Conditions: 150 mM KOAc, 10 mM MgCl2 and 150 mM bicine (pH 8.5), 24 C.
This 170-nucleotide RNA was probed chemically with DMS and 2A3.

RNA sequence: GGGAACGACUCGAGUAGAGUCGAAAAUCCGCGUUCCAUCCUUUCUUACCUGAUGGCCGGCAUGGUCCCAGCCUCCUCGCUGGCGCCGGCUGGGCAACAUUCCGAGGGGACCGUCCCCUCGGUAAUGAUAGCGCGUAGUUCGCUACGCGCAAAAGAAACAACAACAACAAC
Reactivity to DMS in 0.01 (KOAc 150mM, MgCl2 10mM, bicine 150mM(pH8.5), 24C), signal-to-noise 2, nucleotides 027 to 129: u050c050c020g020c030g000u000u000c000c000a090u020c090c100u040u060u020c020u020u020a110c060c040u030g000a130u040g020g000c000c000g040g060c030a150u100g030g020u060c280c000c010a060g010c000c000u050c130c050u060c300g000c110u000g020g000c210g010c000c090g000g000c000u020g000g020g020c090a140a170c020a000u010u090c030c030g030a010g090g060g000g020a300c200c300g010u070c010c020c030c000u020c000g030g000u000a000a020u010g040a140u030a090
Reactivity to 2A3 in 0.01 (KOAc 150mM, MgCl2 10mM, bicine 150mM(pH8.5), 24C), signal-to-noise 4, nucleotides 027 to 129: u010c000c000g030c000g010u050u050c010c000a060u020c020c080u060u100u100c020u050u110a100c030c060u060g060a120u100g110g000c050c000g040g020c040a130u150g100g040u190c000c020c000a010g020c000c060u090c000c000u060c070g000c010u020g020g020c010g020c000c000g020g020c000u010g000g000g000c020a060a050c000a010u010u000c000c000g020a040g000g020g020g080a100c060c020g290u230c000c000c000c000u000c000g040g000u000a010a000u010g010a000u080a010
The DMS profile rests on 8,453 reads.
For 2A3, 5,318 sequencing reads were counted.
For DMS the reverse transcriptase was MarathonRT.
Values cover nucleotides 27 to 129.
2A3 is a SHAPE reagent: it acylates the 2'-hydroxyl of flexible nucleotides of all four kinds.
It was measured as part of the RMDB library 15KLIB.